[RMDB]
RNA sequence: GGGAACGACUCGAGUAGAGUCGAAAAAUACGUCCUGUCGGCGCAAGCCGACUAUGGUGAUAAACGGACGGUGUAAUAAACCCAUUGGACCCGGGGGCGGUACCCGGCGCCUCCACCACAGCACAGCAUACUGAUACCCUUUCGAGGGUAUCAGUAUAAAAGAAACAACAACAACAAC
Reactivity to DMS in 0.01 (KOAc 150mM, MgCl2 10mM, bicine 150mM(pH8.5), 24C), signal-to-noise 3, nucleotides 027 to 126: a070u030a030c030g000u010c000c000u030g010u020c020g000g000c000g000c300a100a140g010c020c000g020a020c010u010a020u020g000g000u060g020a130u020a120a150a090c130g020g000a030c000g010g000u000g000u030a100a150u000a040a140a130c010c010c000a150u020u030g010g020a050c060c070c120g070g000g000g000g020c040g000g000u030a060c120c030c030g010g010c020g000c030c000u000c030c010a060c050c010a100c180a070g010c130a030c040a080g030c160
Reactivity to 2A3 in 0.01 (KOAc 150mM, MgCl2 10mM, bicine 150mM(pH8.5), 24C), signal-to-noise 5, nucleotides 027 to 126: a000u180a040c000g010u010c010c000u010g000u000c010g010g000c020g010c070a070a030g010c000c010g000a000c000u000a010u020g030g010u100g030a100u070a130a110a030c060g010g000a000c000g000g020u040g040u030a130a180u110a080a060a100c000c010c010a040u060u120g040g010a070c080c090c070g030g000g000g000g000c020g010g010u070a050c000c030c000g020g000c010g010c000c000u030c000c000a060c010c010a030c040a030g060c030a040c010a070g060c020

Structure probing data (DMS and 2A3) for a 177-nucleotide construct. Conditions: 150 mM KOAc, 10 mM MgCl2 and 150 mM bicine (pH 8.5), 24 C. The data come from the RNA Mapping Database (RMDB), libraries RFM100 and RFMREP. For 2A3, 3,729 sequencing reads were counted. DMS (dimethyl sulfate) methylates the pairing face of unpaired adenines and cytosines. For DMS the reverse transcriptase was MarathonRT.